[RMDB]
RNA sequence: GGGAACGACUCGAGUAGAGUCGAAAAGACGGUGUGGUUACGAUCGUGUGACAGCCGUUGCGUACAUCGGGUAGUAUUUCCGCGAUCAACAGAUGAGAGGUUCGGCCGGCAUGACUGAGUUAAGGCCGACCUCGCCUCCCUUCGGGGAGGCGAGGUCAAAAGAAACAACAACAACAAC
Reactivity to 2A3 in 0.01 (KOAc 150mM, MgCl2 10mM, bicine 150mM(pH8.5), 24C), signal-to-noise 2, nucleotides 027 to 126: g150a040c090g000g000u300g070u140g300g160u040u040a010c060g020a150u140c060g100u030g090u060g210a000c030a000g040c040c000g000u000u020g040c080g090u130a040c000a040u090c010g010g000g030u080a120g000u000a300u010u090u000c010c000g010c060g000a090u020c030a010a050c000a010g060a110u280g050a030g000a000g100g000u070u300c050g030g000c000c040g000g020c080a080u170g070a170c110u090g080a000g060u060u080a060a000g020g000c010c000
Reactivity to DMS in 0.01 (KOAc 150mM, MgCl2 10mM, bicine 150mM(pH8.5), 24C), signal-to-noise 2, nucleotides 027 to 126: g010a000c000g000g020u000g000u000g000g010u010u020a020c020g000a040u000c300g030u030g000u000g000a020c020a080g000c000c000g030u000u030g010c110g050u060a020c140a160u050c000g010g000g010u000a040g020u020a130u020u000u000c000c000g000c170g000a000u020c090a150a130c210a180g050a050u000g000a030g000a080g010g000u050u000c000g000g030c050c000g010g150c120a070u000g000a120c210u000g000a140g070u000u000a210a140g000g030c000c000